[RMDB]
RNA sequence: GGGAACGACUCGAGUAGAGUCGAAAAUACCUGUCAUGACGGUUUUACCCAAUCCGAGGUCUACGAACAUGCCGCAGUACGGAUGGUCUUUGAUGAACUGGACGCCUUCGUCCUGAUAGUCGUGCAUGUCGCUGCGGUUCAGUUUAACCGUCCGCAGCUUCCUGACAUUAUUCGUAAUGUCAGGAAGAAAAGAAACAACAACAACAAC
Reactivity to DMS in 0.01 (KOAc 150mM, MgCl2 10mM, bicine 150mM(pH8.5), 24C), signal-to-noise 4, nucleotides 027 to 156: u010a090c030c010u010g020u000c060a110u010g010a070c020g010g020u000u010u000u020a080c030c020c040a130a120u000c020c020g000a220g020g020u000c020u000a060c040g000a080a060c020a060u000g010c020c000g030c000a080g020u000a160c020g010g010a040u000g010g020u000c050u010u000u010g010a180u000g020a150a110c060u000g000g000a030c030g020c090c090u000u010c020g010u000c030c020u000g010a090u000a090g020u010c040g010u020g020c030a060u000g010u000c020g010c010u000g010c010g020g020u000u010c060a050g010u000u000u000a070a050c020c010g010u000c010c070g020c050a110g010
Reactivity to 2A3 in 0.01 (KOAc 150mM, MgCl2 10mM, bicine 150mM(pH8.5), 24C), signal-to-noise 9, nucleotides 027 to 156: u110a030c020c000u040g060u100c120a140u190g010a000c010g010g030u010u020u030u050a020c020c020c000a020a070u070c030c030g030a060g060g070u070c110u200a120c080g100a150a010c040a010u030g010c000c000g010c010a010g010u020a010c010g020g020a020u040g030g040u040c040u110u220u180g150a230u110g050a150a140c070u060g020g010a020c030g220c030c050u070u100c030g010u010c010c000u010g050a100u070a110g130u120c050g040u120g030c020a010u030g020u030c010g020c080u060g030c000g000g000u020u020c010a010g000u000u020u020a010a010c010c000g000u000c000c020g030c010a020g020

This 207-nucleotide RNA was probed chemically with DMS and 2A3. For 2A3 the reverse transcriptase was SuperScript II with manganese. Conditions: 150 mM KOAc, 10 mM MgCl2 and 150 mM bicine (pH 8.5), 24 C. Values are in units of 0.01, from 0 to 300, in steps of 10. The DMS profile rests on 14,082 reads. The 2A3 profile rests on 11,342 reads.